[RMDB]
RNA sequence: GGGAACGACUCGAGUAGAGUCGAAAAAGUACGGGACUGGAGGUCUCCGGAGGAGAUGGCAGCUCUAAUAAAAACAGGCUGCCAAACCGCAGAAACUGUAUAAGCCUCUGUUUCUCAUCCUCGCUACCAAUGGAUCAAUUUUCGAAUUGAUCCAUUGAAAAGAAACAACAACAACAAC
Reactivity to 2A3 in 0.01 (KOAc 150mM, MgCl2 10mM, bicine 150mM(pH8.5), 24C), signal-to-noise 3, nucleotides 027 to 126: a010g060u050a020c040g010g000g040a020c010u080g050g090a060g020g060u040c030u020c050c040g080g030a110g010g030a100g010a030u060g000g000c000a010g020c010u030c030u240a120a280u110a180a160a010a000a010c020a010g000g010c000u010g010c000c000a000a000a000c010c000g000c010a000g050a090a130a040c050u050g060u120a070u030a250a080g030c000c010u010c060u060g060u000u050u010c020u000c010a050u050c000c020u030c050g040c060u050a100c030
Reactivity to DMS in 0.01 (KOAc 150mM, MgCl2 10mM, bicine 150mM(pH8.5), 24C), signal-to-noise 6, nucleotides 027 to 126: a110g000u010a060c070g020g000g000a090c050u010g020g000a170g030g010u000c030u010c030c020g000g010a300g030g010a060g010a260u000g000g010c020a020g000c010u010c020u010a070a110u010a080a100a080a170a090c220a100g000g000c000u000g010c000c000a000a110a060c110c080g000c080a030g010a060a040a070c040u000g000u000a090u000a120a100g010c040c040u000c030u000g000u000u000u000c020u000c040a120u000c040c010u000c080g030c110u010a100c150
An RNA of 177 nucleotides, treated with 2A3 and DMS and read out base by base. Source: RMDB library OK2TRN, as collected in RNAgym. The DMS profile rests on 5,717 reads. As a SHAPE reagent, 2A3 marks flexible, mostly unpaired nucleotides at the ribose 2'-OH.